This 207-nucleotide RNA was probed chemically with 2A3 and DMS. The reactions ran in a buffer of 150 mM KOAc, 10 mM MgCl2 and 150 mM bicine (pH 8.5), at 24 C. Values cover nucleotides 27 to 156. The DMS profile rests on 1,960 reads.

RNA sequence: GGGAACGACUCGAGUAGAGUCGAAAACGGCAAAAAAGCAAACUUGACCACCAAGGAUAAAAGAGAUCUUAUCCAAGGAUGCAAAAGAUAAUCUCACUUUUGACUCCCACUGAUCUCGAACUUAAAGAAAACCGAGACUACUUCGGUAGUCUCGGAAGUUGACCAAAUAGUUCGCUAUUUGGUCAACAAAAGAAACAACAACAACAAC
Reactivity to 2A3 in 0.01 (KOAc 150mM, MgCl2 10mM, bicine 150mM(pH8.5), 24C), signal-to-noise 5, nucleotides 027 to 156: c020g020g000c010a010a020a020a040a090a060g130c080a150a070a100c090u100u090g030a170c020c030a020c020c020a040a020g040g000a030u050a060a060a030a020g010a000g000a010u010c010u030u040a020u030c040c010a040a030g020g000a020u140g010c010a010a020a030a010g030a050u130a160a170u160c090u060c140a060c030u000u010u030u030g080a110c020u020c010c010c030a070c100u070g010a010u020c010u000c000g010a030a040c060u110u160a120a070a090g090a030a130a030a010c000c000g000a000g000a000c000u000a000c000u000u030c120g040g000u000a000g000u000c010u000c000g000g000a000a000
Reactivity to DMS in 0.01 (KOAc 150mM, MgCl2 10mM, bicine 150mM(pH8.5), 24C), signal-to-noise 1, nucleotides 027 to 156: c060g060g020c060a000a050a080a050a040a050g020c120a060a090a120c030u000u030g000a250c100c010a090c030c020a110a300g060g000a070u000a010a050a010a130g000a150g010a080u000c000u000u030a030u000c010c000a100a170g020g000a120u000g050c000a020a050a040a030g000a110u000a030a140u000c130u000c110a120c030u000u000u000u000g010a150c070u000c010c020c000a060c100u010g000a000u000c020u000c020g020a080a110c070u000u000a080a070a160g000a060a040a080a070c030c020g000a020g000a010c000u000a010c000u000u010c260g000g010u000a010g010u020c000u000c000g010g000a000a000